The record gives the reactivity of an RNA of 207 nucleotides to 2A3 and DMS.
The reactions ran in a buffer of 150 mM KOAc, 10 mM MgCl2 and 150 mM bicine (pH 8.5), at 24 C.
RNA sequence: GGGAACGACUCGAGUAGAGUCGAAAAGCCGAUGAAUUGCCGAGAAGCCUGGCUCGAAAUCGUCGACGCAUCGACGACGGUCCUGCCAUUAGACCGUAACGAGGACAUGUCGCCUCGAAUGGCGUCGUAUAACAUGAGUGGUUCGCCACUCAUGUAACACCUUUCUUAAGUUCGCUUAAGAAAGGUGAAAAGAAACAACAACAACAAC
Reactivity to 2A3 in 0.01 (KOAc 150mM, MgCl2 10mM, bicine 150mM(pH8.5), 24C), signal-to-noise 7, nucleotides 027 to 156: g030c020c020g020a040u110g060a070a200u200u100g040c060c010g030a040g050a150a040g040c050c060u060g070g000c030u040c050g050a100a100a040u020c020g010u000c000g010a040c070g020c120a140u110c020g000a000c000g000a000c000g000g000u010c010c020u060g020c000c000a020u050u050a020g010a020c010c030g010u050a020a010c010g010a010g000g000a010c030a140u220g060u150c070g020c020c010u000c000g010a010a020u030g000g040c010g010u040c050g010u020a090u020a270a010c000a000u000g000a000g000u000g010g040u070u090c140g040c050c000a000c000u000c000a000u000g000u000a000a000
Reactivity to DMS in 0.01 (KOAc 150mM, MgCl2 10mM, bicine 150mM(pH8.5), 24C), signal-to-noise 2, nucleotides 027 to 156: g020c010c020g020a080u010g010a060a120u000u000g010c030c010g010a140g000a090a120g010c030c050u000g020g000c020u020c020g040a060a080a050u000c020g020u000c020g010a050c190g030c120a160u010c000g010a040c010g000a060c000g010g000u010c020c030u010g000c040c060a100u000u010a060g000a040c030c040g010u000a090a150c030g000a060g000g010a070c050a100u010g010u010c060g000c000c010u010c010g020a070a060u000g000g010c020g020u000c020g010u020a120u000a070a070c010a020u010g000a000g010u000g010g020u000u000c300g030c000c000a010c000u000c010a000u000g000u010a050a160
For 2A3, 6,579 sequencing reads were counted. For DMS, 7,103 sequencing reads were counted.